Annotation
This 177-nucleotide RNA was probed chemically with DMS and 2A3. For DMS the reverse transcriptase was MarathonRT. High DMS reactivity at an A or C suggests that its Watson-Crick edge is free. For 2A3, 1,185 sequencing reads were counted. For 2A3 the reverse transcriptase was SuperScript II with manganese. The DMS profile rests on 917 reads.

[RMDB]
RNA sequence: GGGAACGACUCGAGUAGAGUCGAAAAGAAGAGCCGGGCUAACAAAGGUGGGAGGCACCCAACCCUUCGCAAGAGCCGACUGGGAAGGCUAAGCGAAACCAAGACAAAAUGGUUAUAAAUAAUGCAACCUUACGUUCACUUUCGAGUGAACGUAAGGAAAAGAAACAACAACAACAAC
Reactivity to DMS in 0.01 (KOAc 150mM, MgCl2 10mM, bicine 150mM(pH8.5), 24C), signal-to-noise 2, nucleotides 027 to 126: g000a120a070g000a110g080c000c010g000g000g010c060u010a070a160c100a020a070a100g020g010u000g010g000g010a090g020g010c040a070c020c000c010a080a170c030c040c030u030u000c020g020c020a040a080g000a060g040c000c000g040a130c130u000g070g010g000a080a110g010g000c010u010a030a220g010c010g010a040a100a050c030c010a020a130g030a080c200a110a030a070a080u000g010g010u000u000a060u000a020a070a070u000a060a050u000g010c070a070a050
Reactivity to 2A3 in 0.01 (KOAc 150mM, MgCl2 10mM, bicine 150mM(pH8.5), 24C), signal-to-noise 1, nucleotides 027 to 126: g060a040a000g000a000g040c000c060g000g030g000c020u100a140a040c030a170a080a030g040g000u090g010g050g010a050g010g040c000a050c000c000c000a070a060c010c000c000u020u010c040g000c020a040a140g000a020g230c000c010g000a050c100u110g020g000g110a070a000g000g010c000u010a060a030g020c010g010a030a000a000c020c010a030a030g160a120c110a050a100a020a120u050g000g010u030u040a070u060a110a140a000u190a090a060u120g070c020a050a050